[RMDB]
The data come from the RNA Mapping Database (RMDB), library OK2TST.
Chemical mapping of a 177-nucleotide RNA with 2A3 and DMS.
For 2A3 the reverse transcriptase was SuperScript II with manganese.
For 2A3, 10,270 sequencing reads were counted.
Values cover nucleotides 27 to 126.
For DMS the reverse transcriptase was MarathonRT.
RNA sequence: GGGAACGACUCGAGUAGAGUCGAAAAGGUGUCAUGUUCUAUGGUGAACCUGGUUCGCGUGACGCAGUUGGUAUUGCAACUCGCGGUGUCAAAGAGUUGAAAGAACGCGGUGCAAACAUAGUGAUAGUACCCAUUAGAUUUUCGAAUCUAAUGGGUAAAAAGAAACAACAACAACAAC
Reactivity to 2A3 in 0.01 (KOAc 150mM, MgCl2 10mM, bicine 150mM(pH8.5), 24C), signal-to-noise 6, nucleotides 027 to 126: g070g010u060g070u110c010a010u020g040u160u010c030u030a020u040g050g000u030g040a030a010c010c010u030g030g040u070u060c030g000c020g030u020g020a020c000g000c030a030g020u020u040g060g010u130a140u120u210g050c010a040a030c010u020c060g000c010g020g050u060g030u030c020a030a060a020g140a080g090u110u160g100a100a080a020g030a040a010c010g020c020g040g000u070g020c030a040a080a030c010a030u040a030g060u060g030a040u050a120g100
Reactivity to DMS in 0.01 (KOAc 150mM, MgCl2 10mM, bicine 150mM(pH8.5), 24C), signal-to-noise 9, nucleotides 027 to 126: g010g010u000g010u000c020a020u000g010u010u000c030u000a050u010g000g020u000g000a160a050c020c020u000g010g010u010u000c040g010c040g010u000g010a110c060g020c040a060g000u000u000g010g010u000a100u010u000g010c020a030a050c060u000c120g020c080g000g020u000g010u000c060a040a100a160g010a120g020u000u000g010a080a120a130g010a110a040c020g010c040g010g010u010g010c110a060a060a060c040a020u000a030g010u000g000a120u010a100g010